[RMDB]
RNA sequence: GGGAACGACUCGAGUAGAGUCGAAAAGGAUCCUCUCACAGGAUUGUCUCUGUGUUCCGAAACUCCAACAGUAUUGCUUCGGGACUCCUACAGCAAUACUGUAGGAAUAGAGAGUAGGAGAGGAUCGCACUCGGUAGCCAUUCGUGGCUACCGAGUGAAAAGAAACAACAACAACAAC
Reactivity to 2A3 in 0.01 (KOAc 150mM, MgCl2 10mM, bicine 150mM(pH8.5), 24C), signal-to-noise 1, nucleotides 027 to 126: g070g020a010u000c020c010u000c000u010c000a220c040a150g200g100a300u150u170g100u000c020u000c010u040g200u010g000u050u000c010c010g000a110a100a100c080u040c060c040a060a060c010a070g040u050a020u100u060g000c000u020u050c040g000g000g300a280c000u060c010c020u030a010c050a000g000c040a020a030u050a070c000u010g000u010a000g000g040a010a010u030a000g110a010g020a000g060u070a050g040g040a010g000a000g000g000a000u020c010g000
Reactivity to DMS in 0.01 (KOAc 150mM, MgCl2 10mM, bicine 150mM(pH8.5), 24C), signal-to-noise 1, nucleotides 027 to 126: g030g010a000u000c000c000u000c020u000c000a150c140a100g000g030a080u000u020g000u000c000u000c000u000g000u000g020u020u000c000c000g010a110a050a170c100u010c080c050a090a100c030a010g010u000a040u000u000g010c020u000u010c300g000g000g000a080c200u000c060c020u000a150c230a010g000c010a060a040u000a160c000u000g050u000a030g030g010a040a030u020a010g000a050g000a020g010u000a120g000g000a060g010a010g020g010a020u000c010g000